[RMDB]
RNA sequence: GGGAACGACUCGAGUAGAGUCGAAAAAAGCGAAGAGAACACAAGAAUCGGAAGUCUUCCCGAAGACGCCGGGGACAUCUCGGAAUGAGAAAGGAGACAGGUGGAAGAAAAAGGGGUGGGCCCCCCGUGAGUUCCCAGUUCGCUGGGAACAAAAGAAACAACAACAACAAC
Reactivity to 2A3 in 0.01 (KOAc 150mM, MgCl2 10mM, bicine 150mM(pH8.5), 24C), signal-to-noise 4, nucleotides 027 to 129: a000a000g070c040g010a060a010g010a020g010a090a000c020a010c010a090a050g030a090a050u070c020g020g010a030a030g030u000c010u030u020c010c000c020g010a040a030g020a020c080g000c030c020g020g000g010g020a030c010a090u030c010u020c020g010g030a050a030u100g010a020g030a030a040a020g040g030a010g010a020c030a020g000g030u020g000g040a050a020g050a040a060a030a020a020g010g000g010g000u050g020g020g000c000c000c000c000c000c010g020u020g030a050
Reactivity to DMS in 0.01 (KOAc 150mM, MgCl2 10mM, bicine 150mM(pH8.5), 24C), signal-to-noise 4, nucleotides 027 to 129: a050a070g030c050g040a060a040g010a080g020a050a020c120a070c120a020a010g040a130a120u040c060g060g010a080a060g020u020c070u030u020c030c020c030g020a090a060g030a060c170g050c020c010g030g030g040g010a100c130a070u000c020u040c000g020g040a050a050u070g000a040g020a000a110a110g000g000a000g020a070c030a050g040g040u050g000g000a090a030g010a000a040a050a140a070g020g000g040g030u030g000g000g000c020c050c010c030c040c000g030u000g020a170
The record gives the reactivity of an RNA of 170 nucleotides to 2A3 and DMS. The 2A3 profile rests on 7,496 reads. High DMS reactivity at an A or C suggests that its Watson-Crick edge is free. The RNA was probed in 150 mM KOAc, 10 mM MgCl2 and 150 mM bicine (pH 8.5) at 24 C.